[RMDB]
RNA sequence: GGGAACGACUCGAGUAGAGUCGAAAAGGAUGACAUAUUCACAACACUGCUGCUGCACAACCAUGGCGACGGCACAAUCAUUAGGCUAAUAACACUUAUUUGCAUUCUUAUCAUGCCGGCAGCUCUCGAACCUCUAUAACUUCGGUUAUAGAGGUUCAAAAGAAACAACAACAACAAC
Reactivity to 2A3 in 0.01 (KOAc 150mM, MgCl2 10mM, bicine 150mM(pH8.5), 24C), signal-to-noise 2, nucleotides 027 to 126: g060g010a060u070g050a050c040a070u220a090u080u080c050a040c030a130a050c030a050c060u100g000c010u030g000c010u040g020c010a010c020a140a120c050c040a070u130g050g000c010g030a060c020g000g000c000a010c010a040a040u030c030a030u050u060a040g040g000c020u020a030a040u060a130a060c220a030c190u120u060a040u040u050u000g010c010a010u040u020c010u010u040a070u140c030a040u060g010c000c000g000g030c010a000g010c000u000c000u000c060
Reactivity to DMS in 0.01 (KOAc 150mM, MgCl2 10mM, bicine 150mM(pH8.5), 24C), signal-to-noise 3, nucleotides 027 to 126: g020g010a090u000g040a090c130a100u010a060u010u000c070a040c060a050a100c120a130c110u000g000c050u000g020c020u000g030c040a060c120a050a100c120c100a090u010g010g010c020g020a200c030g010g010c000a010c100a040a050u000c080a040u000u000a030g000g020c010u000a040a050u010a050a090c180a080c230u010u000a050u000u000u000g010c020a030u000u010c100u000u000a040u020c100a080u000g010c000c000g010g000c050a070g010c060u000c060u010c120
An RNA of 177 nucleotides, treated with 2A3 and DMS and read out base by base. The data come from the RNA Mapping Database (RMDB), library RFMREP.